RNA sequence: GGGAACGACUCGAGUAGAGUCGAAAAGCUUCAAUAGGGACCAGAUCCAAGGGCAAGUUACGGAAUAGGAAGUACCGGCCAAUUCAGUGCCAGCAUUCGAAAUACUAAGGAUGGUCCGCACUAGCAAAAAUAAAAUAUUAUUCGUAAUAUUUUAUUUAAAAGAAACAACAACAACAAC
Reactivity to 2A3 in 0.01 (KOAc 150mM, MgCl2 10mM, bicine 150mM(pH8.5), 24C), signal-to-noise 2, nucleotides 027 to 126: g040c010u150u150c090a130a130u170a120g060g000g010a010c000c020a000g030a120u000c020c030a000a030g000g010g000c050a060a080g040u090u080a030c090g030g020a090a060u090a120g100g050a090a030g020u030a150c000c030g030g040c010c030a040a030u130u250c040a040g010u000g100c000c030a020g030c030a050u000u130c010g060a140a010a080u150a150c040u020a050a050g030g000a010u010g020g000u000c000c000g020c020a020c010u010a000g000c010a070a000
Reactivity to DMS in 0.01 (KOAc 150mM, MgCl2 10mM, bicine 150mM(pH8.5), 24C), signal-to-noise 2, nucleotides 027 to 126: g020c000u030u020c090a080a120u030a100g050g000g010a050c020c030a060g010a080u010c030c020a070a240g000g000g040c070a080a070g020u040u010a080c090g000g010a050a080u010a060g010g010a080a080g010u020a070c100c110g000g000c070c050a080a070u040u020c140a090g020u010g000c010c020a160g020c080a040u000u000c030g020a090a060a090u020a060c060u020a050a300g010g000a050u000g000g000u000c060c050g000c070a120c040u000a040g020c040a000a040
Description
The record gives the reactivity of an RNA of 177 nucleotides to 2A3 and DMS. For 2A3, 950 sequencing reads were counted. For DMS, 2,666 sequencing reads were counted.